[RMDB]
RNA sequence: GGGAACGACUCGAGUAGAGUCGAAAACUCACUACAUCGGGAACAUACUUCCCUUGUAUGACGGUUUUUCCGCCGAUGUUUUCUUUAGUGAGGGUGGAAAAGGAGUUCGUCUCCACGAACACCGAAAGGGAAGUGCAGAGUUCGCUCUGCAUUUCCCAAAAGAAACAACAACAACAAC
Reactivity to 2A3 in 0.01 (KOAc 150mM, MgCl2 10mM, bicine 150mM(pH8.5), 24C), signal-to-noise 9, nucleotides 027 to 126: c000u010c000a010c030u030a010c000a040u050c040g020g010g060a120a060c010a060u110a090c040u110u100c030c000c000u010u060g030u020a040u040g060a050c030g000g060u030u040u020u160u080c010c020g000c000c000g010a010u020g060u020u070u070u060c080u050u120u040a040g010u010g040a040g030g020g000u030g020g040a030a050a070a100g010g010a020g000u060u110c130g100u140c060u000c020c000a040c060g040a050a010c010a010c010c010g030a080a030a030
Reactivity to DMS in 0.01 (KOAc 150mM, MgCl2 10mM, bicine 150mM(pH8.5), 24C), signal-to-noise 9, nucleotides 027 to 126: c020u000c010a040c070u000a010c020a020u010c150g000g010g000a060a080c140a120u020a100c160u010u010c040c030c040u010u020g010u000a010u010g010a200c100g010g000u000u010u010u010u020c010c020g000c030c020g000a080u020g010u000u010u010u010c050u000u010u000a040g010u010g000a050g000g000g030u010g000g000a040a060a130a050g010g010a020g010u010u030c170g000u020c040u010c040c030a050c130g000a240a190c000a030c000c000g010a070a070a140